Notes:
This 177-nucleotide RNA was probed chemically with DMS and 2A3.
RNA sequence: GGGAACGACUCGAGUAGAGUCGAAAACGGCAGUGGCAUCUUAUCCGUACGUUAUGUGCGGUGUCGCUUCCUAUAAGCGUAGAAGCGACGACCAGAGAUGUGCAAGUGAGUAUCCCUGCUCCUAGCAUCUAGUGUUGCUGUUCGCGGCAACGCUAGAAAAAGAAACAACAACAACAAC
Reactivity to DMS in 0.01 (KOAc 150mM, MgCl2 10mM, bicine 150mM(pH8.5), 24C), signal-to-noise 9, nucleotides 027 to 126: c130g000g020c080a060g020u020g010g010c010a010u010c020u000u010a090u040c010c020g010u000a010c000g020u040u050a070u070g010u000g000c020g000g000u030g010u000c000g000c000u000u000c090c080u010a070u020a090a140g010c250g010u010a050g010a030a000g000c010g000a010c000g000a110c210c160a090g010a040g000a020u000g010u010g010c040a070a060g010u020g010a060g010u000a090u010c000c000c000u000g000c010u000c010c020u000a080g010c100a180
Reactivity to 2A3 in 0.01 (KOAc 150mM, MgCl2 10mM, bicine 150mM(pH8.5), 24C), signal-to-noise 9, nucleotides 027 to 126: c040g080g000c050a070g040u090g100g000c000a010u000c010u020u050a040u080c010c000g000u010a010c030g100u190u300a160u300g010u010g010c010g000g000u010g000u000c000g000c000u000u010c020c010u090a090u060a260a090g100c140g070u100a010g000a010a000g000c000g000a000c000g010a020c020c060a030g010a000g000a060u020g010u070g060c010a030a060g050u080g180a020g010u040a070u060c000c000c000u010g010c010u010c010c010u020a030g030c010a050

The reactions ran in a buffer of 150 mM KOAc, 10 mM MgCl2 and 150 mM bicine (pH 8.5), at 24 C. For DMS the reverse transcriptase was MarathonRT.